Overview: Conditions: 150 mM KOAc, 10 mM MgCl2 and 150 mM bicine (pH 8.5), 24 C. An RNA of 177 nucleotides, treated with 2A3 and read out base by base. Values cover nucleotides 27 to 126. For 2A3, 324 sequencing reads were counted.

[RMDB]
RNA sequence: GGGAACGACUCGAGUAGAGUCGAAAAAGUUCUGUGGUGCUGCUCGGGGAUGGACUCCAUGCACAGUCCACUUCUUGACACAUUCUCACACUGUGGCUGGAGACCCAUUUUUUCCAUCCCAUGUGGACGCAGCCCAGUCAUUCGUGACUGGGCUGCGAAAAGAAACAACAACAACAAC
Reactivity to 2A3 in 0.01 (KOAc 150mM, MgCl2 10mM, bicine 150mM(pH8.5), 24C), signal-to-noise 1, nucleotides 027 to 126: a010g190u110u000c100u180g060u010g000g060u110g000c000u000g000c020u040c100g000g000g000g040a000u060g000g000a000c000u000c000c000a110u250g050c000a000c000a000g000u070c170c100a000c000u000u040c000u000u000g000a000c070a000c040a230u000u210c230u070c070a200c000a000c170u000g000u000g120g000c040u070g000g000a030g000a000c010c110c000a000u290u280u140u000u180u000c070c000a060u060c020c000c000a000u300g110u000g110g110a000